[RMDB]
RNA sequence: GGGAACGACUCGAGUAGAGUCGAAAAUUGGGUCAGGCGGAGGAAGGCAACUUCCCAGGGGGGCAACCCUCGAACCGCAGCAGCGACAUUCACAAGGAAUCGGUUUGAACUGGGGUCACACGGUUCAAAUUUAAAUUACGUGAAUCGCUCUGGUCCGCAUGUCUGCUAUCUUCGGAUAGCAGACAUGAAAAGAAACAACAACAACAAC
Reactivity to 2A3 in 0.01 (KOAc 150mM, MgCl2 10mM, bicine 150mM(pH8.5), 24C), signal-to-noise 1, nucleotides 027 to 156: u080u060g000g000g000u010c000a000g010g020c010g010g010a040g010g000a020a000g020g000c030a070a110c020u000u020c000c020c000a000g030g000g000g000g000g000c020a070a080c000c010c000u000c020g030a030a030c000c020g000c000a000g040c020a000g020c000g000a030c060a210u010u000c000a000c020a030a120g130g010a110a060u050c040g020g000u000u000u000g000a000a000c000u010g010g040g080g090u180c060a060c010a000c100g000g000u010u000c000a010a010a010u110u120u130a080a080a040u070u100a000c030g000u000g010a010a010u030c000g000c000u000c000u010g020g030u000c000c010g010